[RMDB]
RNA sequence: GGGAACGACUCGAGUAGAGUCGAAAAUAGAAGAAGAGGCUAGGUGGUAUUCCGGUGUGGGAUACUUGGUAAUAUGUAACGCUAAUUGCAUAAGAUUGUAGGACGGAAUUUACAGUCUUGGUGUUUAAAAACUUCUCGUAGUUCGCUACGAGAAGAAGCUUUAGCUUUCGUUCGCGAAAGCUAAAGCAAAAGAAACAACAACAACAAC
Reactivity to 2A3 in 0.01 (KOAc 150mM, MgCl2 10mM, bicine 150mM(pH8.5), 24C), signal-to-noise 2, nucleotides 027 to 156: u080a010g050a090a020g020a000a010g030a000g050g000c050u080a090g040g000u010g030g000u040a040u090u060c030c000g130g060u080g040u130g050g030g000a040u030a080c030u050u070g050g010u110a060a080u050a060u170g050u020a020a020c030g000c070u070a070a070u180u080g000c010a000u010a100a020g000a040u070u040g000u040a010g000g060a010c130g030g050a070a020u120u160u040a030c000a030g000u000c000u030u040g000g020u040g010u000u140u070a050a110a030a050a050c010u000u000c000u000c000g000u000a000g020u010u030c250g010c130u000a000c010g020a000g000a000a010g000a000a010
Record summary:
The record gives the reactivity of an RNA of 207 nucleotides to 2A3. It was measured as part of the RMDB library M2RFPK. Conditions: 150 mM KOAc, 10 mM MgCl2 and 150 mM bicine (pH 8.5), 24 C.